[RMDB]
RNA sequence: GGGAACGACUCGAGUAGAGUCGAAAACUGGUUUAAUGAUACGUUUUUUCUUACCAUCAUCAGCAAUACCAACUGGUUUAACGUCUAAUGCUGCUAAUGCAUCUGCAAAUGAGUACUCUAAUACAACAACAUAGAUCCAGUUCGCUGGAUCUAUGUUAAAAGAAACAACAACAACAAC
Reactivity to 2A3 in 0.01 (KOAc 150mM, MgCl2 10mM, bicine 150mM(pH8.5), 24C), signal-to-noise 3, nucleotides 027 to 126: c000u030g030g100u040u100u160a100a060u100g070a050u060a150c090g000u110u000u000u020u140u000c050u050u070a050c000c010a020u060c000a020u010c010a030g040c070a040a080u040a140c020c000a040a070c070u030g030g040u040u040u060a080a030c020g020u000c040u030a040a100u060g000c000u010g030c050u080a080a030u110g010c000a040u020c040u080g010c030a030a080a170u130g020a040g040u030a020c030u010c020u060a030a130u150a140c050a120a030c020
Reactivity to DMS in 0.01 (KOAc 150mM, MgCl2 10mM, bicine 150mM(pH8.5), 24C), signal-to-noise 4, nucleotides 027 to 126: c020u010g020g020u000u000u000a080a090u000g020a100u000a080c110g010u010u000u000u000u000u010c050u030u000a120c070c020a050u000c060a050u000c050a040g010c060a070a060u000a120c070c050a090a090c060u000g000g010u000u010u010a020a080c100g000u000c090u010a080a060u010g020c020u010g000c070u010a070a040u010g010c030a030u000c080u000g020c060a010a060a070u000g010a100g000u000a080c070u010c040u000a050a070u010a090c140a060a080c160
Description:
Chemical mapping of a 177-nucleotide RNA with 2A3 and DMS. The RNA was probed in 150 mM KOAc, 10 mM MgCl2 and 150 mM bicine (pH 8.5) at 24 C. For DMS, 3,530 sequencing reads were counted. Source: RMDB library OK2TST, as collected in RNAgym. Reactivities are given for positions 27 through 126. For DMS the reverse transcriptase was MarathonRT. Values are in units of 0.01, from 0 to 300, in steps of 10.